Source information: Chemical mapping of a 177-nucleotide RNA with 2A3 and DMS. Values cover nucleotides 27 to 126. For DMS the reverse transcriptase was MarathonRT. For DMS, 1,399 sequencing reads were counted. 2A3 is a SHAPE reagent: it acylates the 2'-hydroxyl of flexible nucleotides of all four kinds.

RNA sequence: GGGAACGACUCGAGUAGAGUCGAAAAAGUGCCUGGGGUGCGUCGCGGCCGGUGAUCACGACGUGCUGGUUGCCGGGGCGGUGGGUCAACGUCUCGACGACCUCGUCGACAUCGACCCAGCCCCACACUAAAUGAGGUCGUUCGCGACCUCAUUUAGAAAAGAAACAACAACAACAAC
Reactivity to 2A3 in 0.01 (KOAc 150mM, MgCl2 10mM, bicine 150mM(pH8.5), 24C), signal-to-noise 1, nucleotides 027 to 126: a000g100u050g090c030c040u020g010g000g000g000u100g100c110g050u090c000g020c060g120g270c010c000g000g020u000g010a020u010c020a010c090g200a050c220g140u140g090c130u000g010g020u010u010g040c060c000g000g000g010g000c000g020g030u030g010g000g020u000c000a040a050c100g030u000c010u020c070g010a010c040g060a120c020c090u150c080g000u000c020g020a000c020a040u120c140g000a010c000c000c000a000g020c010c020c070c000a000c010a000
Reactivity to DMS in 0.01 (KOAc 150mM, MgCl2 10mM, bicine 150mM(pH8.5), 24C), signal-to-noise 2, nucleotides 027 to 126: a080g010u000g000c050c090u000g010g020g000g040u000g020c260g010u000c010g030c030g000g010c020c030g020g000u000g000a040u000c020a050c040g030a140c230g020u010g020c180u000g010g050u000u010g020c040c010g000g000g040g020c010g030g000u020g000g000g010u000c000a080a080c120g000u010c140u000c020g020a010c000g000a250c260c300u010c000g020u000c020g000a050c060a080u000c080g000a040c000c000c000a230g000c000c000c000c030a030c040a070